Structure probing data (DMS) for a 177-nucleotide construct. Values are in units of 0.01, from 0 to 300, in steps of 10.
[RMDB]
RNA sequence: GGGAACGACUCGAGUAGAGUCGAAAAUUUAUUUUAGGGAUAGAUCCCUUCUUUGCCAAUGGUAUUUCAGAUGACCCCCCAGUAUAUGAAAAAGAUGAAAGAGGAGCCACAGGUCCUGAAGGCUGCCUGGUGACAAAUAUUUCGAUAUUUGUCACCAAAAAGAAACAACAACAACAAC
Reactivity to DMS in 0.01 (KOAc 150mM, MgCl2 10mM, bicine 150mM(pH8.5), 24C), signal-to-noise 1, nucleotides 027 to 126: u000u010u030a030u000u020u000u010a090g010g020g000a050u000a120g030a070u000c030c010c000u010u000c000u000u020u000g030c060c020a050a120u000g000g020u000a030u010u010u000c070a070g030a110u000g040a190c050c010c000c010c040c010a080g010u020a090u020a050u010g000a030a090a130a050a060g010a110u010g000a060a080a040g010a080g010g000a100g010c060c070a050c080a120g000g010u000c010c050u000g000a100a080g000g010c070u000g000c070c050